[RMDB]
RNA sequence: GGGAACGACUCGAGUAGAGUCGAAAAGAUAUGGAGACUAACAGCAACAGCGAGUCCAUCGGAAACGAUGGCUCGACAUGCUGUAGUCUCCUAAGUCAAAAGGAACCAGCCUUCGGGCUGGUUCCAAGUCAUAAGUAUCCUUCGGGAUACUUAUGACAAAAGAAACAACAACAACAAC
Reactivity to 2A3 in 0.01 (KOAc 150mM, MgCl2 10mM, bicine 150mM(pH8.5), 24C), signal-to-noise 3, nucleotides 027 to 126: g000a000u020a000u080g030g000a020g010a010c010u100a300a100c160a000g000c070a040a300c070a300g050c000g000a000g040u140c040c000a000u000c000g000g000a000a000a000c010g000a000u010g010g010c000u010c000g020a030c020a020u190g000c000u010g010u000a000g000u000c000u010c000c000u000a010a000g010u000c000a030a020a090a170g000g000a010a010c000c000a000g040c000c030u100u220c300g120g000g000c010u000g060g000u000u000c000c000a000a010
Reactivity to DMS in 0.01 (KOAc 150mM, MgCl2 10mM, bicine 150mM(pH8.5), 24C), signal-to-noise 3, nucleotides 027 to 126: g000a010u000a060u020g000g000a040g010a020c010u010a050a090c000a000g020c000a130a170c300a220g000c000g000a010g000u010c010c010a010u010c000g030g000a020a010a030c010g000a010u000g010g010c010u000c000g000a030c110a080u000g010c000u000g020u010a010g010u000c000u000c000c000u010a000a050g000u000c010a110a100a160a190g010g000a010a000c000c010a010g000c000c000u000u020c300g020g020g050c000u000g000g010u010u000c000c010a010a050

About this RNA
Structure probing data (2A3 and DMS) for a 177-nucleotide construct. Reactivities are rounded to 0.1 and cut off at 0 and 3. For 2A3, 5,708 sequencing reads were counted. For DMS the reverse transcriptase was MarathonRT. For 2A3 the reverse transcriptase was SuperScript II with manganese.